The data come from the RNA Mapping Database (RMDB), library OK1LIB.
This 177-nucleotide RNA was probed chemically with DMS.

[RMDB]
RNA sequence: GGGAACGACUCGAGUAGAGUCGAAAAUAUCUACUAGCUUGGCAUCUUGAGCGUAUCUUACUCAAGUGCUAGUAGUUCCAUUACUAUUUAAUGAUAGUAAUGAUGCCUCUUAAUAUAAGAGAUGCAAGCUAGAGCUAUCGUUCGCGAUAGCUCUAGCAAAAGAAACAACAACAACAAC
Reactivity to DMS in 0.01 (KOAc 150mM, MgCl2 10mM, bicine 150mM(pH8.5), 24C), signal-to-noise 1, nucleotides 027 to 126: u050a110u030c000u000a050c020u000a000g000c000u010u120g000g000c070a030u070c020u000u000g000a000g000c220g020u180a060u080c300u000u070a210c000u000c000a000a000g040u000g030c000u020a020g000u000a000g040u000u050c150c040a020u000u010a000c000u020a000u000u000u060a120a220u110g000a070u000a000g000u000a000a000u000g000a080u000g000c020c000u030c080u000u000a180a070u040a040u060a000a000g000a000g060a020u000g000c020a160a060